Conditions: 150 mM KOAc, 10 mM MgCl2 and 150 mM bicine (pH 8.5), 24 C.
Structure probing data (DMS and 2A3) for a 207-nucleotide construct.
Values cover nucleotides 27 to 156.
For DMS, 2,675 sequencing reads were counted.
For 2A3, 3,229 sequencing reads were counted.
[RMDB]
RNA sequence: GGGAACGACUCGAGUAGAGUCGAAAAUUAGCGAGAUUCGUCUCGCUAAAUCAAUCCUAAGUCAAAUCGGGGACAUGACGCUCUUCGGAAACGAAGAUCGUCAACAGCUCUCUAGCGUGUUUGAUAUGGAGAAAGCGAAAAGCUUCGGCUUUUCGAACGAGGUCUAUAAGUUCGCUUAUAGACCUCGAAAAGAAACAACAACAACAAC
Reactivity to DMS in 0.01 (KOAc 150mM, MgCl2 10mM, bicine 150mM(pH8.5), 24C), signal-to-noise 2, nucleotides 027 to 156: u000u000a030g010c000g010a010g000a040u010u010c300g030u020c000u000c000g010c020u010a010a010a080u010c120a130a240u000c020c000u010a090a190g010u000c030a010a040a080u000c060g020g000g020g000a050c050a300u010g000a010c000g040c140u000c000u000u010c000g000g000a160a060a280c010g030a040a030g000a020u000c000g010u010c010a000a030c170a240g040c060u000c030u000c010u010a080g060c090g040u020g030u000u000u000g010a090u010a300u000g010g010a050g000a070a050a140g000c020g010a060a010a000a040g060c010u010u000c280g080g000c000u000u010u000u000c000g010a050a120
Reactivity to 2A3 in 0.01 (KOAc 150mM, MgCl2 10mM, bicine 150mM(pH8.5), 24C), signal-to-noise 3, nucleotides 027 to 156: u040u010a010g000c000g010a000g010a020u050u060c150g130u030c060u020c000g000c000u000a000a010a000u090c010a010a050u000c000c010u100a160a050g030u000c000a000a000a030u040c040g000g000g020g000a000c010a030u020g000a000c000g000c000u000c000u000u000c000g050g000a090a070a080c010g000a000a000g010a010u000c000g000u000c010a000a010c000a010g030c020u000c000u000c030u090a080g130c080g080u180g010u020u000u010g020a020u020a050u130g010g010a060g080a090a140a030g110c010g000a020a000a000a000g000c010u050u110c230g070g000c000u020u000u000u000c020g000a060a040